Source: RMDB library TTRDEL, as collected in RNAgym. The record gives the reactivity of an RNA of 177 nucleotides to DMS and 2A3. The reactions ran in a buffer of 150 mM KOAc, 10 mM MgCl2 and 150 mM bicine (pH 8.5), at 24 C. For 2A3 the reverse transcriptase was SuperScript II with manganese.

RNA sequence: GGGAACGACUCGAGUAGAGUCGAAAAGAUAUGGAGUCCGUAACAUCGAACUACCUCUGAGUGUCGGAAACGACACGAAAGAGGCGUGGGACUCCUAAGUCAAAACCCUAAGGUUCGCCUUAGGGAACACGCAAUUGAACUUCGGUUCAAUUGCGUGAAAAGAAACAACAACAACAAC
Reactivity to DMS in 0.01 (KOAc 150mM, MgCl2 10mM, bicine 150mM(pH8.5), 24C), signal-to-noise 2, nucleotides 027 to 126: g000a070u000a300u000g000g000a010g050u000c000c020g000u000a070a150c160a070u000c070g010a120a120c060u020a300c040c000u000c000u020g030a300g000u000g020u000c000g000g060a010a140a300c020g000a020c030a000c000g000a060a030a000g020a030g030g010c160g050u000g040g010g010a010c000u000c000c010u000a000a030g000u000c020a100a140a050a140c000c000c000u000a000a000g000g050u000u000c210g000c010c000u010u000a020g000g000g000a000a040
Reactivity to 2A3 in 0.01 (KOAc 150mM, MgCl2 10mM, bicine 150mM(pH8.5), 24C), signal-to-noise 1, nucleotides 027 to 126: g060a010u070a000u100g010g000a040g040u030c060c040g140u230a140a100c060a200u300c100g030a050a110c090u180a120c240c000u000c000u000g020a060g000u000g020u040c020g040g000a070a100a010c000g000a000c000a000c030g000a000a010a000g000a000g000g000c000g000u000g000g030g030a000c000u000c000c000u000a150a020g050u040c010a000a050a010a270c000c020c000u000a000a000g070g000u000u150c300g090c040c000u000u000a000g000g020g010a000a010